The record gives the reactivity of an RNA of 177 nucleotides to 2A3 and DMS. The DMS profile rests on 1,139 reads. The reactions ran in a buffer of 150 mM KOAc, 10 mM MgCl2 and 150 mM bicine (pH 8.5), at 24 C. The 2A3 profile rests on 1,291 reads.

RNA sequence: GGGAACGACUCGAGUAGAGUCGAAAAGCACGCCGACAACGUCUGCUUCAUAAAGACUGUGAACCUUGACGGUGAGAGCAACCUGAAGAUCAGGCGACCAGUGGAUAUCAAAGGGGACAUGCCAAAGCAACCGCAACGUAUUCGUACGUUGCGGUUGAAAAGAAACAACAACAACAAC
Reactivity to 2A3 in 0.01 (KOAc 150mM, MgCl2 10mM, bicine 150mM(pH8.5), 24C), signal-to-noise 2, nucleotides 027 to 126: g040c010a010c050g020c000c030g050a060c010a030a040c040g030u020c030u030g010c020u030u040c030a060u260a210a130a030g050a070c130u080g000u020g150a020a020c020c030u030u040g060a050c070g030g020u030g060a130g010a020g000c060a050a000c000c000u000g030a050a000g040a150u120c040a000g000g040c030g030a020c000c030a040g040u050g000g030a030u040a040u240c070a110a140a100g000g000g000g020a000c010a000u130g000c010c010a040a070a000g030
Reactivity to DMS in 0.01 (KOAc 150mM, MgCl2 10mM, bicine 150mM(pH8.5), 24C), signal-to-noise 2, nucleotides 027 to 126: g020c040a050c030g030c010c000g000a120c060a090a070c080g020u000c030u000g010c100u000u000c030a070u000a110a140a140g000a110c070u020g020u000g030a070a050c060c030u000u000g000a150c140g020g010u010g000a130g000a100g000c070a120a040c060c050u000g000a090a060g000a090u000c030a070g020g000c060g020a110c060c050a070g030u020g030g000a080u000a030u010c020a060a100a080g030g010g010g010a090c080a040u000g020c010c020a010a070a140g010